[RMDB]
RNA sequence: GGGAACGACUCGAGUAGAGUCGAAAAUCGCGGCCGCGCAGACGAUGGACGACGGCUGCGCGAAGCCGGCCGCCACCGCGCAAUCGGCCGCGCUCGGCAACGGCUUCGACAGCACCGCGUCGGGGCAACUGCCGACGUAGUUCGCUACGUCGGCAGUAAAAGAAACAACAACAACAAC
Reactivity to DMS in 0.01 (KOAc 150mM, MgCl2 10mM, bicine 150mM(pH8.5), 24C), signal-to-noise 1, nucleotides 027 to 126: u000c010g020c040g000g000c030c030g010c140g040c070a120g010a070c060g010a060u000g060g000a150c020g020a120c060g040g040c050u000g000c080g040c040g000a060a080g000c010c010g000g010c150c020g010c110c030a070c140c060g030c030g000c060a180a150u000c090g000g000c020c040g000c050g000c060u000c040g020g020c000a100a110c020g010g000c000u010u000c020g000a060c020a060g020c070a070c070c100g010c110g000u000c040g000g000g000g040c160a110